An RNA of 177 nucleotides, treated with 2A3 and DMS and read out base by base.
RNA sequence: GGGAACGACUCGAGUAGAGUCGAAAAUUUGCCCGUAGAUUUCAGUGCCGGUUAACUCCUCGAGCAAUUCCGCGCGUUCUUUGGGUUUGGCAUUCAGGAAGGCAGCAAAUUGCCCCUGCGAAAGCAGCAAUAAUGCAGAGUUCGCUCUGCAUUAUUGAAAAGAAACAACAACAACAAC
Reactivity to 2A3 in 0.01 (KOAc 150mM, MgCl2 10mM, bicine 150mM(pH8.5), 24C), signal-to-noise 4, nucleotides 027 to 126: u030u030u090g040c020c010c020g000u070a150g040a300u090u130u120c050a010g040u020g060c020c000g050g040u090u050a070a080c020u020c030c010u040c050g020a020g010c030a040a100u170u010c030c030g060c030g000c040g050u050u000c000u060u060u070g000g000g000u050u060u080g020g000c020a030u080u040c030a030g090g000a070a050g060g000c010a020g010c020a100a020a050u070u060g050c000c000c000c020u000g000c010g040a110a040a010g010c010a000g000
Reactivity to DMS in 0.01 (KOAc 150mM, MgCl2 10mM, bicine 150mM(pH8.5), 24C), signal-to-noise 8, nucleotides 027 to 126: u000u010u010g010c000c030c060g020u000a100g010a190u000u010u000c060a050g020u000g010c030c020g000g010u010u010a100a080c050u000c020c030u000c070g010a050g000c050a080a140u000u000c060c070g020c100g020c090g010u000u000c030u000u000u000g010g000g000u000u000u000g010g010c040a050u000u000c090a100g000g010a060a070g010g010c070a090g010c040a030a030a070u000u000g010c010c000c020c010u000g000c020g010a090a090a160g010c020a030g010
It was measured as part of the RMDB library OK2TRN. DMS adducts were read by reverse transcription with MarathonRT. Conditions: 150 mM KOAc, 10 mM MgCl2 and 150 mM bicine (pH 8.5), 24 C.